Overview: Structure probing data (2A3 and DMS) for a 207-nucleotide construct. The reactions ran in a buffer of 150 mM KOAc, 10 mM MgCl2 and 150 mM bicine (pH 8.5), at 24 C. The 2A3 profile rests on 2,604 reads.
RNA sequence: GGGAACGACUCGAGUAGAGUCGAAAACAACCUGGCUUAGAGAAGGAGGACGUCUGGACAGUCUUAUGUCUUUGUCAUUAAAAACCAUCAAUGCUAUUCAGUGGCAGGAGGAGGAAGUUCAAAAGAGGGAAUGUGGAGGCAUCUGUGGUACUCAGAACUCGGUAUUUAAUUUCGAUUAAAUACCGAGAAAAGAAACAACAACAACAAC
Reactivity to 2A3 in 0.01 (KOAc 150mM, MgCl2 10mM, bicine 150mM(pH8.5), 24C), signal-to-noise 3, nucleotides 027 to 156: c050a010a070c010c030u030g050g010c030u090u060a030g010a000g010a120a030g050g030a020g000g010a000c030g020u060c050u060g030g020a020c010a010g030u040c030u090u180a060u070g020u000c000u010u070u090g070u020c020a040u030u200a050a070a050a030a040c020c010a020u090c050a110a080u070g020c000u050a060u130u110c040a030g040u050g050g000c040a030g000g030a010g010g000a010g010g020a030a010g020u100u160c110a070a070a040a020g070a050g000g010g030a030a050u110g030u060g040g030a020g010g000c010a020u000c030u050g020u030g020g020u030a070c030u050c070a020g000a050a060
Reactivity to DMS in 0.01 (KOAc 150mM, MgCl2 10mM, bicine 150mM(pH8.5), 24C), signal-to-noise 3, nucleotides 027 to 156: c060a070a260c040c020u010g000g030c070u010u010a140g000a140g000a110a090g010g000a100g010g010a040c040g040u000c030u010g020g000a030c030a060g000u000c140u000u000a100u000g000u000c020u000u000u010g010u010c080a120u000u000a060a070a060a090a060c030c030a080u010c080a060a080u000g030c030u010a110u000u000c060a120g050u000g020g030c060a070g020g010a070g030g000a090g000g010a060a090g020u000u000c020a040a040a060a100g020a090g030g020g010a050a100u000g030u000g020g010a080g020g010c050a050u000c040u000g000u000g010g010u000a070c070u010c020a180g000a080a200